[RMDB]
An RNA of 177 nucleotides, treated with 2A3 and DMS and read out base by base. The RNA was probed in 150 mM KOAc, 10 mM MgCl2 and 150 mM bicine (pH 8.5) at 24 C. 2A3 adducts were read by reverse transcription with SuperScript II with manganese. The data come from the RNA Mapping Database (RMDB), library OK2TRN.

RNA sequence: GGGAACGACUCGAGUAGAGUCGAAAAGACUGGGAAAGUCGGGAAUGGUCGUGGUCGUGGUCUUCAUAGAGCUUGCUUAUUGAGUCGUGCUCCAAACGGUGGUUCCAUGGAGGAACGGUACGUGGUCUGAGGCUUAUACUUUCGAGUAUAAGCCUCAAAAAGAAACAACAACAACAAC
Reactivity to 2A3 in 0.01 (KOAc 150mM, MgCl2 10mM, bicine 150mM(pH8.5), 24C), signal-to-noise 1, nucleotides 027 to 126: g000a000c010u010g020g000g060a070a140a060g070u080c060g000g020g000a070a110u110g050g060u040c040g040u000g040g050u010c020g070u010g020g020u070c000u010u030c040a070u030a050g080a020g050c000u040u020g020c010u060u090a080u070u280g010a020g000u010c000g050u030g010c010u010c030c000a090a050a010c010g030g000u060g020g030u040u000c030c000a040u150g160g070a140g020g010a030a010c010g030g020u100a010c030g000u030g030g020u060c120
Reactivity to DMS in 0.01 (KOAc 150mM, MgCl2 10mM, bicine 150mM(pH8.5), 24C), signal-to-noise 4, nucleotides 027 to 126: g000a080c040u000g010g020g000a110a130a080g020u010c030g010g000g000a090a090u010g010g010u000c040g020u010g000g010u000c020g010u010g010g010u000c040u000u010c050a110u000a110g000a080g000c020u000u000g000c030u000u000a110u020u010g000a020g010u000c020g020u000g000c040u010c010c080a060a070a090c080g020g010u000g010g010u000u000c010c000a180u000g000g020a200g000g030a030a030c040g020g020u020a130c050g010u000g010g020u000c150